The record gives the reactivity of an RNA of 177 nucleotides to 2A3 and DMS. The RNA was probed in 150 mM KOAc, 10 mM MgCl2 and 150 mM bicine (pH 8.5) at 24 C. For DMS the reverse transcriptase was MarathonRT. For DMS, 19,086 sequencing reads were counted. 2A3 adducts were read by reverse transcription with SuperScript II with manganese.

RNA sequence: GGGAACGACUCGAGUAGAGUCGAAAAUGACGGGGAGGUUACAGAGAUUCUUGGAGGGAGCGAUGGCGUGAUGCUCGGGUUUCUUAGCGUUAGGGGCGAGUCUAUCCCUUUAGUGGAUGUGAAAAGGUGAUUGUGUAGUAUUCGUACUACACAAUCAAAAAGAAACAACAACAACAAC
Reactivity to 2A3 in 0.01 (KOAc 150mM, MgCl2 10mM, bicine 150mM(pH8.5), 24C), signal-to-noise 4, nucleotides 027 to 126: u100g020a020c030g010g010g000g000a030g000g040u040u040a030c040a020g070a010g030a140u110u090c030u110u130g030g020a050g020g040g000a060g020c050g030a030u090g050g010c030g030u040g050a040u100g020c020u000c020g040g020g030u020u080u060c030u040u060a030g010c000g090u050u050a030g010g010g010g020c000g000a010g010u000c000u020a050u060c000c000c000u050u040u010a070g010u060g050g020a070u060g030u030g100a060a110a010a010g110g010
Reactivity to DMS in 0.01 (KOAc 150mM, MgCl2 10mM, bicine 150mM(pH8.5), 24C), signal-to-noise 8, nucleotides 027 to 126: u010g000a110c090g000g000g000g010a070g010g010u010u010a090c150a100g000a130g000a100u000u000c060u000u010g010g010a100g020g010g010a080g020c070g010a080u010g010g010c060g020u000g010a080u000g010c030u000c080g010g000g000u000u000u000c050u000u010a100g010c070g000u010u010a100g010g000g000g010c040g000a040g010u000c020u000a220u010c000c000c010u000u010u010a070g020u000g010g000a040u000g010u000g000a050a060a100a100g010g010